Chemical mapping of a 177-nucleotide RNA with DMS.

RNA sequence: GGGAACGACUCGAGUAGAGUCGAAAAGAUAUGGACGAGUCCCACAGGUUCCCUACAUCGGAAACGAUGUAGCACCUGAGGGACGAUGAGUCCUAAGUCAAAAGGCGAGGAGUUCGCUCCUCGCCAACAUUACUACGCCGUUCGCGGCGUAGUAAUGAAAAGAAACAACAACAACAAC
Reactivity to DMS in 0.01 (KOAc 150mM, MgCl2 10mM, bicine 150mM(pH8.5), 24C), signal-to-noise 4, nucleotides 027 to 126: g000a060u000a300u010g000g000a010c010g020a170g010u000c010c000c010a090c010a020g020g000u000u010c130c150c000u010a000c000a000u000c000g010g000a130a090a240c010g010a020u000g010u000a010g040c110a000c000c010u000g000a090g010g010g000a000c000g000a020u010g010a250g000u000c000c000u000a040a120g000u000c050a090a060a120a150g000g010c000g000a010g000g000a020g000u000u000c250g000c010u000c000c000u010c000g010c000c000a000a010
DMS adducts were read by reverse transcription with MarathonRT. Conditions: 150 mM KOAc, 10 mM MgCl2 and 150 mM bicine (pH 8.5), 24 C.